[RMDB]
RNA sequence: GGGAACGACUCGAGUAGAGUCGAAAAGCUGAAAUGAUUUACUGUUGAAGAGAUGCCUUGCGGUGUGGCCAGCUGUGAGGAGAAAGCAGCUGGCAGUGUUAGGACAUUAGUCCACCUUCAGCGCAGGAGCGUUUAUAACUUUCGAGUUAUAAACGCUAAAAGAAACAACAACAACAAC
Reactivity to DMS in 0.01 (KOAc 150mM, MgCl2 10mM, bicine 150mM(pH8.5), 24C), signal-to-noise 7, nucleotides 027 to 126: g020c050u010g010a060a080a080u010g000a130u010u000u000a100c110u010g000u000u010g010a070a090g000a160g000a060u000g000c040c010u000u010g020c100g010g000u010g010u020g010g000c000c010a030g010c000u010g010u010g000a140g040g020a160g010a080a100a300g000c010a010g010c010u000g000g010c010a010g000u010g010u000u010a070g020g000a030c010a130u010u010a060g010u000c010c020a150c080c040u000u000c000a020g010c020g010c140a070g000g010
Reactivity to 2A3 in 0.01 (KOAc 150mM, MgCl2 10mM, bicine 150mM(pH8.5), 24C), signal-to-noise 6, nucleotides 027 to 126: g050c050u070g040a030a080a120u140g080a130u100u130u230a130c050u060g070u100u060g040a060a030g020a010g020a070u060g030c020c010u060u080g010c050g040g080u100g040u080g160g000c000c000a010g000c000u010g010u030g040a160g110g060a120g100a040a040a000g010c010a000g000c000u000g000g000c010a000g000u030g030u030u090a050g000g000a020c020a090u100u140a050g020u010c010c000a010c000c000u020u030c010a030g020c010g000c020a020g050g080